[RMDB]
RNA sequence: GGGAACGACUCGAGUAGAGUCGAAAAUGAUAACCAUCCUUGCUCCCCGUGCCUACUCGGGCUGUGGGCGACACCAUGGCUGCCCUGGGCUGGGCCAGUUGGGCCAUUGCCUGGGGACUGAGGGCAACUUUCUGUAUAUCUUCGGAUAUACAGAAAGAAAAGAAACAACAACAACAAC
Reactivity to 2A3 in 0.01 (KOAc 150mM, MgCl2 10mM, bicine 150mM(pH8.5), 24C), signal-to-noise 4, nucleotides 027 to 126: u070g030a050u080a120a080c050c030a040u060c020c010u050u070g040c030u040c000c000c000c020g040u030g000c010c000u120a160c020u040c050g020g050g000c010u010g000u000g000g030g020c080g120a060c030a020c060c000a010u020g030g000c010u030g060c040c000c000u000g000g000g000c010u040g020g030g000c020c010a120g100u220u200g110g020g020c000c010a100u080u110g000c000c000u000g010g010g000g000a000c010u030g000a020g010g000g000c000a010a040
Reactivity to DMS in 0.01 (KOAc 150mM, MgCl2 10mM, bicine 150mM(pH8.5), 24C), signal-to-noise 4, nucleotides 027 to 126: u010g000a100u000a080a180c110c100a110u010c040c030u000u000g010c110u000c010c000c000c130g010u010g020c020c020u000a080c060u000c030g000g000g010c020u010g030u000g000g010g000c040g020a170c120a140c020c010a020u000g000g010c010u000g000c010c010c010u000g000g010g010c010u000g010g000g000c000c010a160g020u000u010g010g020g020c000c000a070u000u000g010c000c010u000g000g000g000g010a070c060u000g000a070g010g000g000c050a060a240